[RMDB]
RNA sequence: GGGAACGACUCGAGUAGAGUCGAAAAAACUGUGAUGGACGUCAUCUCUAGAGAGGAUCAGAGAGGAAGCGGUCAGGUAGUGACUUACGCCCUGAACACCUUCACCAAUCUAGCAGUUCAGCUGGUCCAUCACUCCCGCGUUCGCGCGGGAGUGAUGAAAAGAAACAACAACAACAAC
Reactivity to 2A3 in 0.01 (KOAc 150mM, MgCl2 10mM, bicine 150mM(pH8.5), 24C), signal-to-noise 1, nucleotides 027 to 126: a000a000c130u140g050u010g020a030u030g000g000a000c060g030u070c060a130u010c010u040c000u000a000g000a000g010a030g100g000a040u260c190a070g170a000g000a020g100g000a270a000g030c140g000g000u000c000a000g000g150u120a000g000u070g020a000c010u090u250a070c040g000c010c020c000u000g000a000a000c000a000c070c030u000u060c040a010c000c000a000a000u010c000u010a000g040c070a000g060u040u220c080a000g000c030u000g000g050u000c010
Reactivity to DMS in 0.01 (KOAc 150mM, MgCl2 10mM, bicine 150mM(pH8.5), 24C), signal-to-noise 1, nucleotides 027 to 126: a060a040c160u080g020u010g020a020u020g080g020a070c020g050u020c130a020u000c030u000c000u000a080g020a060g010a300g000g030a120u070c160a240g000a100g020a060g000g000a070a040g000c280g000g000u000c000a010g000g000u010a090g000u000g000a120c110u020u000a190c000g000c090c000c000u000g000a060a000c050a100c000c000u000u010c200a100c000c000a000a300u000c000u000a040g000c140a070g010u070u010c130a160g070c110u000g060g000u010c000